This 177-nucleotide RNA was probed chemically with 2A3. 2A3 adducts were read by reverse transcription with SuperScript II with manganese.
[RMDB]
RNA sequence: GGGAACGACUCGAGUAGAGUCGAAAAGCGCUAUUACCUGCGCGGAUUGGCUUACCAGAUGUCGCGCCUGCUGAUGACCUUCGCCAGCGCGAAUAAAUAGGGUUUUGGCGUCGCAUCCCGCCAGAUCCCGCUAAUCCGCCUUCGGGCGGAUUAGCGGAAAAGAAACAACAACAACAAC
Reactivity to 2A3 in 0.01 (KOAc 150mM, MgCl2 10mM, bicine 150mM(pH8.5), 24C), signal-to-noise 1, nucleotides 027 to 126: g000c000g000c040u030a140u140u060a180c050c140u130g000c000g010c000g000g000a000u000u000g000g000c000u100u040a210c040c000a230g000a210u160g090u180c000g000c000g000c040c000u000g000c000u010g040a260u000g010a010c000c000u000u000c000g060c110c040a050g000c160g050c100g050a050a050u010a130a050a000u150a020g080g040g090u070u130u000u010g050g040c040g020u040c000g000c040a090u080c000c000c000g020c050c000a060g000a020u150c070
Conditions: 150 mM KOAc, 10 mM MgCl2 and 150 mM bicine (pH 8.5), 24 C.